[RMDB]
RNA sequence: GGGAACGACUCGAGUAGAGUCGAAAACAUCUGACUUAUGUAGGUCAUAAGGGUCAGCGCGACCGUGUGUCGACGAUACUGCUUCACGCGGAUCGUGGUGGGCUAGUGUCGGUGCCAGAACUGACAAUCAUGGGUACCUCUUCGGGGGUACUCAUGAAAAAGAAACAACAACAACAAC
Reactivity to 2A3 in 0.01 (KOAc 150mM, MgCl2 10mM, bicine 150mM(pH8.5), 24C), signal-to-noise 9, nucleotides 027 to 126: c010a070u030c010u030g040a010c000u010u020a010u050g080u080a050g070g100u090c000a000u010a020a010g020g000g030u020c000a000g000c000g000c000g000a000c000c000g000u000g000u010g000u000c000g010a240c010g020a050u060a140c050u100g010c000u000u010c000a000c000g000c000g000g020a100u010c000g000u000g000g100u040g010g010g000c010u030a030g020u000g000u010c000g000g000u010g010c010c030a010g000a020a010c000u010g000a000c000a010a020
Reactivity to DMS in 0.01 (KOAc 150mM, MgCl2 10mM, bicine 150mM(pH8.5), 24C), signal-to-noise 9, nucleotides 027 to 126: c070a100u030c060u020g000a080c000u000u010a040u020g010u020a110g010g010u030c010a020u010a040a040g000g000g020u030c000a020g010c030g010c010g000a010c010c010g010u010g000u000g000u000c010g000a060c050g010a170u040a100c150u040g000c000u000u000c010a010c020g000c000g000g000a080u000c010g020u000g000g010u010g010g000g010c010u010a060g000u010g000u000c010g000g030u000g010c020c020a050g010a030a040c010u000g000a020c030a040a130
Chemical mapping of a 177-nucleotide RNA with 2A3 and DMS. The 2A3 profile rests on 59,296 reads. For DMS, 73,048 sequencing reads were counted. The data come from the RNA Mapping Database (RMDB), library OK1LIB. 2A3 adducts were read by reverse transcription with SuperScript II with manganese.